[RMDB]
RNA sequence: GGGAACGACUCGAGUAGAGUCGAAAAAGUAAGAGGACGCGCAAGGAAGUCUUAGUGUCCAAGGAUUUCGUGUAUACAGUGCUUAACCACAUUCGAACAUACCAGGCGAAAGCUCUUACAUACGCAAAUAUGGACCCUGAUUCGUCAGGGUCCAUAUAAAAGAAACAACAACAACAAC
Reactivity to DMS in 0.01 (KOAc 150mM, MgCl2 10mM, bicine 150mM(pH8.5), 24C), signal-to-noise 2, nucleotides 027 to 126: a090g000u000a010a070g000a030g000g000a130c130g000c040g000c120a130a020g010g020a080a080g000u000c060u020u010a010g010u000g030u000c030c080a050a030g000g010a050u030u010u000c000g000u010g020u030a090u020a140c100a060g020u000g030c030u000u020a030a200c140c060a140c150a090u000u030c150g010a070a090c130a090u000a150c050c100a080g000g000c000g000a000a040a180g020c030u000c010u000u000a000c050a030u000a010c020g000c180a000a060
Reactivity to 2A3 in 0.01 (KOAc 150mM, MgCl2 10mM, bicine 150mM(pH8.5), 24C), signal-to-noise 2, nucleotides 027 to 126: a010g070u050a000a000g010a070g000g010a130c030g090c000g000c070a000a060g100g040a040a000g040u010c000u030u130a080g050u070g070u040c020c030a080a090g000g010a000u080u190u020c010g010u000g100u020a050u080a080c130a050g040u000g010c030u040u070a120a020c000c000a010c000a110u100u120c040g050a080a000c000a040u190a120c070c000a020g000g030c030g040a080a020a000g040c000u020c000u000u000a040c000a040u130a070c060g000c100a240a090